[RMDB]
RNA sequence: GGGAACGACUCGAGUAGAGUCGAAAAUAGACGAUGUCCAAUGUUUCCAAAUGCACUCUUACGCUUAUCCUUUUGUGGGGAUUUCUUUUCUCUUUCCGUAUUAGCGGCACCAUUGGAUACAGAGACCAUCAUUAUCCUGCUUCGGCAGGAUAAUGAUAAAAGAAACAACAACAACAAC
Reactivity to DMS in 0.01 (KOAc 150mM, MgCl2 10mM, bicine 150mM(pH8.5), 24C), signal-to-noise 3, nucleotides 027 to 126: u040a180g000a090c100g020a130u030g000u000c020c010a060a120u020g000u000u000u020c020c040a030a030a140u020g000c040a160c060u010c010u000u010a070c010g010c160u000u000a050u000c030c040u000u010u030u020g030u010g010g010g000g010a110u000u020u010c040u020u010u000u010c060u000c010u000u020u040c040c010g020u020a080u020u030a050g000c090g020g000c050a010c160c030a080u000u000g000g000a020u000a000c130a100g020a130g000a070c170c080
Reactivity to 2A3 in 0.01 (KOAc 150mM, MgCl2 10mM, bicine 150mM(pH8.5), 24C), signal-to-noise 9, nucleotides 027 to 126: u190a020g080a050c070g060a060u100g020u010c020c010a040a080u070g030u030u050u000c030c000a020a070a080u150g040c040a030c030u070c020u070u100a050c070g050c050u070u090a070u110c030c010u040u090u080u180g120u200g030g020g000g030a040u040u090u110c080u060u110u080u010c040u020c000u050u150u020c040c010g040u070a100u100u100a140g060c110g030g000c010a020c010c010a040u030u040g010g000a010u020a030c030a000g080a010g020a040c030c010